[RMDB]
RNA sequence: GGGAACGACUCGAGUAGAGUCGAAAAAGUCUGGCUCGGGCUCUCUUAACGGCGCCUUCCGCGGCUAGUCAGACUAACUACAUUAUGAGAAUGCCCCAGCAUAUUGGAUCGUCCUGCAGGUCAUAAGACCACUAUUGCGGUUCGCCGCAAUAGUGGUAAAAGAAACAACAACAACAAC
Reactivity to 2A3 in 0.01 (KOAc 150mM, MgCl2 10mM, bicine 150mM(pH8.5), 24C), signal-to-noise 2, nucleotides 027 to 126: a000g010u010c000u000g030g000c000u010c030g000g000g090c030u010c010u000c030u060u090a200a030c140g010g000c020g020c000c010u110u080c050c010g040c010g050g000c020u000a000g030u000c010a000g010a030c030u020a060a000c000u080a010c000a070u110u130a080u140g010a010g070a090a000u050g010c000c000c000c000a000g030c030a060u090a100u090u150g010g030a050u060c040g030u020c000c020u020g030c000a010g000g030u040c030a020u050a090a050g050
Reactivity to DMS in 0.01 (KOAc 150mM, MgCl2 10mM, bicine 150mM(pH8.5), 24C), signal-to-noise 1, nucleotides 027 to 126: a040g000u030c000u030g040g000c000u010c130g000g010g000c050u000c050u020c010u030u000a150a120c120g000g000c070g000c020c020u030u000c070c000g000c220g000g000c000u010a030g040u010c060a070g000a080c030u000a050a090c080u000a160c110a050u070u010a070u070g020a060g010a030a000u010g000c030c030c000c020a090g000c030a140u020a000u020u050g030g010a110u030c000g000u000c000c000u000g000c110a070g000g000u000c060a120u050a050a100g020

Chemical mapping of a 177-nucleotide RNA with 2A3 and DMS. The data come from the RNA Mapping Database (RMDB), library OK1LIB. The DMS profile rests on 1,395 reads. For 2A3, 1,209 sequencing reads were counted. Conditions: 150 mM KOAc, 10 mM MgCl2 and 150 mM bicine (pH 8.5), 24 C.